[RMDB]
RNA sequence: GGGAACGACUCGAGUAGAGUCGAAAACGUCAGACCGAUCCGCUGAGGCGGUCACUGCGGCUGUCGAUGACAAGUUGCGGGAAAUUGGCGUGGCGGAGGCCAAAAUUCGCGCUUUGAUGGCAGAAUUACACGCACUUCGGUCGAGUGCAUCAACAUCACAUAGCGUUGCAUUCGUGCAACGCUAUGUAAAAGAAACAACAACAACAAC
Reactivity to 2A3 in 0.01 (KOAc 150mM, MgCl2 10mM, bicine 150mM(pH8.5), 24C), signal-to-noise 2, nucleotides 027 to 156: c040g070u030c050a020g040a060c010c000g010a100u070c040c030g020c020u080g060a080g120g090c000g010g000u050c060a010c010u020g010c000g040g000c000u000g000u050c040g140a160u190g030a140c090a130a080g040u120u090g120c000g030g090g050a040a130a040u070u090g000g000c020g010u040g060g000c000g050g030a050g070g000c000c010a020a080a000a000u080u090c070g000c010g030c140u110u070u130g070a100u100g000g030c040a010g020a070a020u120u160a050c040a010c060g000c000a020c040u020u040c050g000g050u020c030g010a000g000u050g010c010a080u090c050a050a040c010a070u100c030